[RMDB]
RNA sequence: GGGAACGACUCGAGUAGAGUCGAAAAUCGUUGGCUCGAGAGUUCACCAUUAAGAUAGAUUGAUGUUCGGCACUCACGCCAUGUAAUUAAGGUGGUGUGCUUCUGAUCCAACGAUGCGGGAGCUGCAUUCUGUACGCCUGUUCGCAGGCGUACAGAAAAAAGAAACAACAACAACAAC
Reactivity to DMS in 0.01 (KOAc 150mM, MgCl2 10mM, bicine 150mM(pH8.5), 24C), signal-to-noise 1, nucleotides 027 to 126: u000c000g060u000u000g000g060c040u000c000g050a040g030a100g000u000u000c020a020c030c000a000u000u000a060a160g000a080u010a090g010a200u000u020g010a040u020g000u040u020c130g070g000c020a110c100u070c070a160c020g000c130c000a070u010g000u020a040a020u000u050a030a300g030g040u000g000g010u000g000u000g000c010u000u020c000u070g000a020u000c000c000a020a020c000g000a000u000g000c030g000g000g000a140g010c130u010g020c060a110
Reactivity to 2A3 in 0.01 (KOAc 150mM, MgCl2 10mM, bicine 150mM(pH8.5), 24C), signal-to-noise 2, nucleotides 027 to 126: u040c000g000u000u000g020g000c000u000c020g190a010g000a010g030u040u030c000a000c000c000a000u040u060a130a040g160a160u180a060g100a100u090u170g010a000u030g110u240u130c110g000g000c000a050c070u110c020a060c070g030c020c000a000u050g070u050a000a060u040u050a100a040g030g030u000g000g000u010g000u020g030c000u150u000c020u030g010a000u010c000c030a020a040c000g000a010u060g010c020g000g000g030a010g060c050u090g010c040a030
The data come from the RNA Mapping Database (RMDB), library RFM100. Structure probing data (DMS and 2A3) for a 177-nucleotide construct. For DMS, 1,651 sequencing reads were counted. The reactions ran in a buffer of 150 mM KOAc, 10 mM MgCl2 and 150 mM bicine (pH 8.5), at 24 C.